The record gives the reactivity of an RNA of 207 nucleotides to DMS and 2A3. Values cover nucleotides 27 to 156. Source: RMDB library OK3TST, as collected in RNAgym.
RNA sequence: GGGAACGACUCGAGUAGAGUCGAAAAGGAUGAUCUGGUCCCGGCCAGUGAUCCGAAUUAGUACCGGGAUUGCAUCGUCGAGCCGUCAGGGGCGAAGACGAGAACCUGAAAGCACGAAGCACAGGGCGGUGCGCGUGCGAGAUAUAACGCCCAACAAAUAUUUACCCACUUUCGAGUGGGUAAAUAUAAAAGAAACAACAACAACAAC
Reactivity to DMS in 0.01 (KOAc 150mM, MgCl2 10mM, bicine 150mM(pH8.5), 24C), signal-to-noise 1, nucleotides 027 to 156: g010g050a060u000g010a120u000c050u010g000g010u000c030c050c140g020g060c000c000a130g000u000g030a050u000c060c060g010a060a140u000u000a060g010u000a040c000c010g010g000g000a100u000u000g080c000a150u010c010g020u000c010g010a300g010c010c000g030u010c110a170g030g010g030g000c000g010a140a170g000a120c010g000a080g000a040a030c050c000u000g000a140a120a170g010c000a060c050g000a080a140g010c010a050c040a170g010g010g030c070g030g000u000g010c050g020c030g000u000g010c030g000a050g000a120u000a150u000a080a110c000g030c000c020c010a150a110c080a140a070
Reactivity to 2A3 in 0.01 (KOAc 150mM, MgCl2 10mM, bicine 150mM(pH8.5), 24C), signal-to-noise 2, nucleotides 027 to 156: g010g000a020u090g010a060u070c000u020g010g040u030c060c040c050g020g060c040c010a040g050u060g090a050u000c000c000g050a020a050u140u120a110g050u040a050c000c020g010g000g020a010u010u200g020c080a110u000c000g000u000c010g010a010g010c000c010g110u210c130a060g150g120g000g010c000g020a060a020g010a000c000g000a000g000a020a060c000c020u090g050a100a040a010g010c000a000c020g030a130a020g000c020a020c050a050g040g030g000c030g000g000u000g010c010g000c020g000u000g000c050g030a030g020a010u190a010u040a140a080c040g000c000c000c000a010a010c060a000a110